[RMDB]
RNA sequence: GGGAACGACUCGAGUAGAGUCGAAAAGUGCGUUUGAGUGAGAGAAGAACACGUGCAGUGCAGUCAGAGCCCAGGAUUCCAUCUACCUCUGUGAAGGAGGCAGACGCUGGGAGAGUGGAGGUGACCUGCCUUGGUCACAGGCUUGGAGUCAGUGCCAAUAAUAGUACGCAUUCGUGCGUACUAUUAUAAAAGAAACAACAACAACAAC
Reactivity to DMS in 0.01 (KOAc 150mM, MgCl2 10mM, bicine 150mM(pH8.5), 24C), signal-to-noise 4, nucleotides 027 to 156: g010u000g020c060g010u010u000u000g010a110g010u000g010a100g010a130g010a080a110g010a100a060c050a070c020g010u000g020c050a060g000u000g030c020a060g020u000c030a090g000a140g020c020c020c020a070g020g000a140u010u000c210c080a050u000c010u000a050c030c010u010c010u010g020u010g030a170a290g010g000a030g000g020c010a020g010a040c050g010c050u000g000g010g010a050g000a110g030u010g010g010a090g000g020u000g010a040c030c000u010g020c080c070u010u000g000g020u000c040a040c040a050g000g000c030u000u000g010g000a100g010u000c030a120g020u000g000c010c020a090
Reactivity to 2A3 in 0.01 (KOAc 150mM, MgCl2 10mM, bicine 150mM(pH8.5), 24C), signal-to-noise 6, nucleotides 027 to 156: g050u040g020c060g020u050u070u120g060a050g010u100g010a050g010a000g020a100a040g020a050a020c030a010c080g030u060g010c040a030g010u020g070c020a010g040u050c050a020g040a040g100c010c000c010a010g030g040a090u150u040c050c020a040u020c040u030a050c010c020u030c030u040g070u060g150a120a090g040g010a010g000g000c000a010g010a030c030g040c120u060g000g050g010a040g010a020g020u090g020g030a040g010g020u020g010a040c010c020u060g050c010c040u050u070g050g000u050c010a000c010a030g020g000c030u030u050g020g010a030g010u040c050a010g030u010g080c010c010a020